[RMDB]
RNA sequence: GGGAACGACUCGAGUAGAGUCGAAAAACAUGCUCUAUACCUCGGCCUUCAACUGGUUGUUGUUGGCAGGUACAUUGCAUUAUUUCUUUGCACAGACUUCCAUAUUUGUAGACUGGCGGUCAUACAACGAGUCCCCUGUUCGCAGGGGACAAAAGAAACAACAACAACAAC
Reactivity to 2A3 in 0.01 (KOAc 150mM, MgCl2 10mM, bicine 150mM(pH8.5), 24C), signal-to-noise 6, nucleotides 027 to 129: a000c030a000u010g000c000u000c000u010a080u030a020c000c000u010c120g250g000c000c000u000u000c000a030a030c020u100g300g150u230u210g040u010u010g000u000u000g030g010c000a010g000g000u000a000c000a020u020u000g000c000a010u000u000a050u030u110u010c030u040u070u130g000c060a090c030a060g020a030c030u040u010c010c000a050u070a120u110u210u160g110u060a040g010a080c050u030g020g040c010g020g020u000c010a050u090a190c050a120a010c060g040a010
Reactivity to DMS in 0.01 (KOAc 150mM, MgCl2 10mM, bicine 150mM(pH8.5), 24C), signal-to-noise 3, nucleotides 027 to 129: a050c220a080u030g020c010u010c010u030a000u010a040c030c010u060c230g070g070c020c020u030u000c010a070a030c010u060g070g030u000u000g000u040u020g040u060u040g000g000c050a000g000g000u000a030c000a030u000u000g020c030a030u020u020a100u000u000u000c010u000u000u000g020c100a070c140a120g040a050c080u000u070c040c050a010u040a160u100u060u090g070u000a100g050a120c140u020g060g040c000g040g000u030c030a070u000a060c050a090a050c230g030a090
Record summary:
An RNA of 170 nucleotides, treated with 2A3 and DMS and read out base by base. The RNA was probed in 150 mM KOAc, 10 mM MgCl2 and 150 mM bicine (pH 8.5) at 24 C. For 2A3 the reverse transcriptase was SuperScript II with manganese. Reactivities are given for positions 27 through 129. The DMS profile rests on 8,772 reads.